[RMDB]
The record gives the reactivity of an RNA of 177 nucleotides to 2A3 and DMS. The RNA was probed in 150 mM KOAc, 10 mM MgCl2 and 150 mM bicine (pH 8.5) at 24 C. Reactivities are given for positions 27 through 126.
RNA sequence: GGGAACGACUCGAGUAGAGUCGAAAAGAUAUGGAGGCACUUCGCUGAUGACCUAUACGAAAUCGGAAACGAUUUCUGUAUAGCAAGGCGAUGUGCCUCCUAAGUCAAAGUCCAGUUCGCUGGACAACAUGAAUUGAUUCUUCGGAAUCAAUUCAUGAAAAGAAACAACAACAACAAC
Reactivity to 2A3 in 0.01 (KOAc 150mM, MgCl2 10mM, bicine 150mM(pH8.5), 24C), signal-to-noise 3, nucleotides 027 to 126: g010a000u060a040u130g020g000a010g020g000c000a000c010u030u000c000g000c010u020g040a130u150g110a150c010c010u000a000u010a010c000g000a010a000a010u010c000g020g060a040a040a040c000g000a000u010u000u000c010u030g000u010a010u000a000g000c030a130a300g040g000c000g000a000u010g000u000g000c000c000u000c000c000u000a000a000g000u000c000a040a030a070g000u000c000c000a000g010u070u150c300g010c170u010g000g020a020c000a010a000
Reactivity to DMS in 0.01 (KOAc 150mM, MgCl2 10mM, bicine 150mM(pH8.5), 24C), signal-to-noise 6, nucleotides 027 to 126: g010a050u000a300u000g000g010a000g010g000c010a020c000u000u000c000g020c000u000g010a120u010g010a120c300c000u000a010u000a000c000g000a010a010a010u000c000g010g000a120a080a220c010g010a000u000u000u000c000u020g040u000a000u000a000g000c040a060a140g000g010c000g000a000u000g010u000g000c010c000u000c000c000u000a010a050g010u000c040a100a090a110g010u000c000c010a000g000u000u020c280g010c010u000g000g000a020c010a070a130